[RMDB]
RNA sequence: GGGAACGACUCGAGUAGAGUCGAAAAGCUGCCUUGUGUGUGCUGUACGUAUCCUGCGUUAGGACCCUUGCUUUGGCAGCGUUAGCUACAAAGUAGUGGAAUGUCCCAUGCAGUUAUUUCUGUAUUUCUGUUAGGUCUGUUCCUCUCAAUCUCCUCAGCAUUGAGGGAGUUUCGACUCCCUCAAUGCAAAAGAAACAACAACAACAAC
Reactivity to 2A3 in 0.01 (KOAc 150mM, MgCl2 10mM, bicine 150mM(pH8.5), 24C), signal-to-noise 2, nucleotides 027 to 156: g020c030u030g020c020c000u140u070g030u010g000u000g010u020g130c020u050g050u030a020c020g060u040a050u120c040c010u090g050c030g070u060u150a050g000g000a020c010c000c040u030u020g040c000u020u070u000g050g040c110a000g000c010g050u100u120a040g000c010u010a010c000a010a100a010g020u010a060g060u080g070g050a240a210u160g010u010c000c000c000a010u060g000c000a010g020u130u050a170u080u120u000c070u120g080u030a130u000u110u000c020u070g050u130u100a010g000g000u020c030u040g030u020u040c000c020u020c000u010c030a080a120u070c070u070c030c060u120c090a050